[RMDB]
This 177-nucleotide RNA was probed chemically with 2A3. For 2A3, 455 sequencing reads were counted. For 2A3 the reverse transcriptase was SuperScript II with manganese.

RNA sequence: GGGAACGACUCGAGUAGAGUCGAAAAAGCCUUGUGCUCAGCGUGCAGACCUUCCAAGUCUGGCGUGCUAAGUGCCACGUGAGCAAAACCGUCCCCAAUCACAUAAGGACCAUGGUCAUAGUUAUAGGUGGGAUUACGCUUUCGAGCGUAAUCCCACAAAAGAAACAACAACAACAAC
Reactivity to 2A3 in 0.01 (KOAc 150mM, MgCl2 10mM, bicine 150mM(pH8.5), 24C), signal-to-noise 2, nucleotides 027 to 126: a000g110c040c000u110u140g080u010g030c000u000c000a010g030c000g080u120g020c000a000g000a010c000c040u170u000c090c060a150a000g040u020c060u040g000g030c000g070u000g000c180u160a190a120g020u040g230c050c000a100c040g030u060g070a030g010c000a040a040a040a030c000c000g060u020c000c000c000c000a040a010u160c060a050c070a110u120a000a000g110g000a000c010c000a150u090g020g010u100c080a040u020a170g020u140u140a080u090a240g150
Conditions: 150 mM KOAc, 10 mM MgCl2 and 150 mM bicine (pH 8.5), 24 C.